[RMDB]
RNA sequence: GGGAACGACUCGAGUAGAGUCGAAAACAGUGAAAGGCGAGGUCAGCGUCAGCAGCCCGCCGCUGAACGCAGGACAACGCCAAAAGUUGGCGGGAAAAGAUACAGGCUGAAGAUACAGCCAGUACAAGAUACGUACCACUUUCGAGUGGUACGUAUCAAAAGAAACAACAACAACAAC
Reactivity to 2A3 in 0.01 (KOAc 150mM, MgCl2 10mM, bicine 150mM(pH8.5), 24C), signal-to-noise 3, nucleotides 027 to 126: c050a000g080u140g300a150a130a120g040g010c020g040a150g300g000u000c010a000g010c000g000u000c000a000g000c020a030g020c010c010c010g000c030c000g000c000u010g000a060a020c010g000c040a030g130g000a000c080a300a150c230g000c000c050a080a050a000a000g170u140u070g010g000c000g010g000g000a050a050a000a000g060a010u020a010c000a000g000g000c000u000g020a040a000g040a160u160a060c010a000g000c010c000a000g000u000a000c000a020a000
Reactivity to DMS in 0.01 (KOAc 150mM, MgCl2 10mM, bicine 150mM(pH8.5), 24C), signal-to-noise 3, nucleotides 027 to 126: c010a160g010u040g070a040a110a150g020g000c000g030a160g020g040u000c010a130g050c000g000u000c000a010g010c000a030g020c000c000c020g010c040c020g000c000u000g000a040a030c050g040c010a190g040g000a080c000a060a120c020g010c010c000a010a070a050a150g000u040u010g000g020c010g020g000g010a060a060a170a050g010a220u000a000c010a020g010g000c000u040g010a110a150g000a230u070a090c000a020g010c000c000a050g000u020a020c080a130a090